[RMDB]
RNA sequence: GGGAACGACUCGAGUAGAGUCGAAAAAAAAAGCACGCGAAGCACGCGAAGCACGCGAAGCACGCGAAGCACGCGAAGCACGCGAAGCACGCGAAGCACGCGAACCACGCGAAGCACGCGAAAAAAAGAUACUAUACUUCUUCGGAAGUAUAGUAUCAAAAGAAACAACAACAACAAC
Reactivity to 2A3 in 0.01 (KOAc 150mM, MgCl2 10mM, bicine 150mM(pH8.5), 24C), signal-to-noise 3, nucleotides 027 to 126: a000a000a000a000a000g080c040a030c040g000c010g040a060a000g000c000a010c030g020c000g040a070a020g040c040a010c030g000c010g030a090a020g060c050a010c040g010c000g020a060a010g040c030a010c030g000c000g050a050a010g130c080a010c050g010c000g050a060a020g010c010a010c010g010c010g040a040a010g010c000a000c010g000c000g010a020a030c020c010a070c040g000c010g060a060a030g030c040a010c020g030c020g070a130a010a000a000a000a010a020
Reactivity to DMS in 0.01 (KOAc 150mM, MgCl2 10mM, bicine 150mM(pH8.5), 24C), signal-to-noise 2, nucleotides 027 to 126: a040a090a120a130a120g040c160a200c050g040c000g010a070a250g000c030a240c010g010c010g010a090a160g010c140a120c050g010c010g010a090a190g030c080a220c040g000c020g000a070a160g010c060a180c000g030c010g000a010a140g000c130a170c060g010c010g040a110a120g010c020a250c010g000c010g010a030a070g000c010a210c030g030c000g000a060a160c110c100a250c030g000c000g020a020a200g000c010a130c000g030c000g020a010a010a080a020a040a150a080